The record gives the reactivity of an RNA of 177 nucleotides to 2A3 and DMS. 2A3 adducts were read by reverse transcription with SuperScript II with manganese. DMS adducts were read by reverse transcription with MarathonRT. For DMS, 16,608 sequencing reads were counted. The 2A3 profile rests on 14,880 reads.
RNA sequence: GGGAACGACUCGAGUAGAGUCGAAAAUUUAGAAGAUGUGGUUUGUGACAACACAACAGCUGGCACAUGUUACAUGAGACAUUGCAACACAUCAAUCAUCAAAGAGUCAUGUGAUAAGCACUAUUGGACAUACGUCAAGAUUCGUCUUGACGUAUGUAAAAGAAACAACAACAACAAC
Reactivity to 2A3 in 0.01 (KOAc 150mM, MgCl2 10mM, bicine 150mM(pH8.5), 24C), signal-to-noise 9, nucleotides 027 to 126: u110u070u060a080g020a120a020g030a030u030g020u020g050g150u020u120u040g040u030g040a070c080a270a060c020a070c020a030a080c030a020g060c050u100g030g000c020a080c020a040u030g010u030u080a100c070a130u100g040a030g020a070c020a030u020u080g010c020a050a030c010a020c000a040u030c010a030a140u060c040a030u030c050a060a110a040g130a040g070u040c040a050u070g010u020g080a130u100a190a030g040c040a020c090u120a160u130u150g070g010
Reactivity to DMS in 0.01 (KOAc 150mM, MgCl2 10mM, bicine 150mM(pH8.5), 24C), signal-to-noise 8, nucleotides 027 to 126: u050u030u020a070g010a100a130g010a030u000g030u000g000g030u020u010u010g000u000g000a130c250a080a070c050a060c070a050a080c140a090g010c110u020g010g000c000a020c110a040u000g000u000u000a090c140a050u030g010a090g000a060c180a050u000u000g000c130a070a160c070a030c080a040u010c020a100a070u010c100a100u010c120a040a050a060g000a090g010u000c050a040u000g000u010g000a080u010a080a060g010c070a080c120u000a110u010u020g010g020